[RMDB]
RNA sequence: GGGAACGACUCGAGUAGAGUCGAAAAGAUAUGGAUUGUGUUGGGAGUCCGUCGGAAACGACGGAACAUCGAUCAACCACAAUCCUAAGUCAAAACAUUAUUCAACAGUUCGCUGUUGAAUAAUGAACCGAAGCAUAUGGUUCGCCAUAUGCUUCGGAAAAGAAACAACAACAACAAC
Reactivity to 2A3 in 0.01 (KOAc 150mM, MgCl2 10mM, bicine 150mM(pH8.5), 24C), signal-to-noise 1, nucleotides 027 to 126: g060a020u070a020u120g000g000a010u000u010g000u000g010u020u020g070g070g010a080g000u010c030c000g000u000c010g000g030a050a030a010c010g030a000c000g000g020a020a030c010a130u100c010g190a200u130c020a000a000c080c040a000c030a010a020u020c010c000u040a150a020g080u040c040a000a040a040a120c010a000u000u010a000u000u010c000a000a000c010a000g090u130u200c280g050c180u010g000u030u010g010a000a010u000a010a010u000g010a030a000
Reactivity to DMS in 0.01 (KOAc 150mM, MgCl2 10mM, bicine 150mM(pH8.5), 24C), signal-to-noise 2, nucleotides 027 to 126: g010a040u010a280u010g000g000a060u020u010g000u000g010u000u000g000g000g000a170g030u000c000c040g020u010c010g020g000a080a060a130c000g010a010c000g000g000a000a010c050a150u000c130g030a170u040c000a030a000c230c040a000c010a000a000u000c000c000u020a030a070g000u000c010a030a090a070a180c020a030u000u000a000u010u000c000a000a010c000a010g000u000u000c300g040c000u010g020u020u000g020a020a000u000a000a000u020g000a070a150